Annotation:
Structure probing data (DMS and 2A3) for a 177-nucleotide construct.
RNA sequence: GGGAACGACUCGAGUAGAGUCGAAAAUCCCGCUCCUGGUUCUACGCGGCGUGCGCUGUACCACCAUCGGUGGUUAUGGCGCUUACCCCGUGAGGGGGGCUUGGGGAACCGAGUCUAGCGUUGUUAUAUGCUAUUGGAUAUUCGUAUCCAAUAGCAUAAAAGAAACAACAACAACAAC
Reactivity to DMS in 0.01 (KOAc 150mM, MgCl2 10mM, bicine 150mM(pH8.5), 24C), signal-to-noise 4, nucleotides 027 to 126: u000c010c000c000g000c040u000c020c070u000g020g020u000u000c010u010a090c030g040c150g010g000c100g000u000g030c030g020c010u000g020u000a020c000c000a010c000c010a130u010c210g020g050u000g000g020u010u010a000u000g020g020c010g030c000u010u020a060c010c000c000c010g000u070g020a190g000g010g010g000g000g010c010u000u030g020g000g010g030a130a100c000c020g010a030g000u010c080u010a090g020c150g010u010u010g000u000u010a150u000
Reactivity to 2A3 in 0.01 (KOAc 150mM, MgCl2 10mM, bicine 150mM(pH8.5), 24C), signal-to-noise 5, nucleotides 027 to 126: u020c000c000c010g000c010u020c000c070u060g050g000u050u040c010u030a090c030g010c020g110g000c020g030u070g000c010g000c010u010g010u010a000c000c010a020c010c000a300u230c240g000g000u010g000g010u100u080a030u020g000g000c010g000c000u000u030a010c010c000c000c000g050u070g060a120g010g010g010g010g010g000c000u080u170g020g010g000g030a000a030c010c020g000a010g020u040c160u090a040g090c030g020u000u000g020u030u060a100u020
Values cover nucleotides 27 to 126. The data come from the RNA Mapping Database (RMDB), libraries RFM100 and RFMREP. The reactions ran in a buffer of 150 mM KOAc, 10 mM MgCl2 and 150 mM bicine (pH 8.5), at 24 C.